Overview:
Conditions: 150 mM KOAc, 10 mM MgCl2 and 150 mM bicine (pH 8.5), 24 C. Chemical mapping of a 207-nucleotide RNA with 2A3 and DMS. The 2A3 profile rests on 656 reads. The DMS profile rests on 1,547 reads.

RNA sequence: GGGAACGACUCGAGUAGAGUCGAAAAUAAUAAGCGAGUUGCAGAUUUGCAACUCGGUCAAUAUAGAGCCAGUUAACGUUAUUCGUGGCGGAAAUAACCAGGGGACGUAUGUCUGCAAAGAACUGGUGUAUGCCUAUGCAAUGUGGAUCAGCCCGUAGUCACUAUUUACGUUCGCGUAAAUAGUGACAAAAGAAACAACAACAACAAC
Reactivity to 2A3 in 0.01 (KOAc 150mM, MgCl2 10mM, bicine 150mM(pH8.5), 24C), signal-to-noise 2, nucleotides 027 to 156: u090a050a070u040a030a020g150c010g010a000g000u000u010g020c030a040g090a300u300u300u210g000c000a000a000c000u010c020g000g000u050c000a020a020u080a020u070a160g120a000g060c000c000a010g100u030u020a070a000c010g000u030u060a020u030u140c050g040u090g040g020c000g050g030a070a070a080u060a020a010c010c050a050g050g050g060g040a000c010g180u260a040u280g040u000c060u040g090c080a050a050a080g050a050a140c020u040g010g010u040g010u070a050u110g000c020c000u040a040u010g040c040a110a070u120g030u040g140g000a020u070c020a010g000c000c000c040g020u000a060
Reactivity to DMS in 0.01 (KOAc 150mM, MgCl2 10mM, bicine 150mM(pH8.5), 24C), signal-to-noise 1, nucleotides 027 to 156: u020a090a170u010a200a230g000c000g080a010g060u000u000g050c080a030g030a300u000u010u000g030c000a040a020c010u000c000g000g000u000c030a060a130u000a090u000a080g000a280g040c000c010a080g090u000u000a110a120c010g010u000u000a160u020u000c050g010u000g030g000c000g020g000a050a080a100u000a090a080c060c010a100g000g020g030g010a050c060g000u000a110u010g000u010c090u000g020c010a080a080a220g000a130a060c060u000g020g030u000g030u020a040u000g020c030c000u000a060u010g000c000a070a130u000g020u030g010g000a100u000c030a040g000c020c020c040g070u000a150